[RMDB]
RNA sequence: GGGAACGACUCGAGUAGAGUCGAAAAGAUAUGGAUCCACGACUUCGAUAAGCCUCAGUCGGAAACGACUGUAGGCUUUUGACGAAGUGGUGGAUCCUAAGUCAAAAGCUGUCCUUCGGGACAGCAACUAGGAAAGCUACUUCGGUAGCUUUCCUAGAAAAGAAACAACAACAACAAC
Reactivity to DMS in 0.01 (KOAc 150mM, MgCl2 10mM, bicine 150mM(pH8.5), 24C), signal-to-noise 1, nucleotides 027 to 126: g000a010u000a300u010g010g000a000u000c000c010a000c000g010a000c020u000u000c010g020a200u000a030a060g000c000c000u000c000a020g010u010c000g020g000a050a070a120c000g000a030c000u010g000u040a000g000g020c000u000u000u000u050g020a230c120g020a020a000g040u000g000g050u010g000g000a010u000c010c000u010a000a060g020u000c020a110a090a120a160g000c010u000g010u000c000c010u000u000c240g040g010g010a000c010a020g010c010a010a010
Chemical mapping of a 177-nucleotide RNA with DMS. DMS adducts were read by reverse transcription with MarathonRT. Reactivities are rounded to 0.1 and cut off at 0 and 3. The DMS profile rests on 1,263 reads.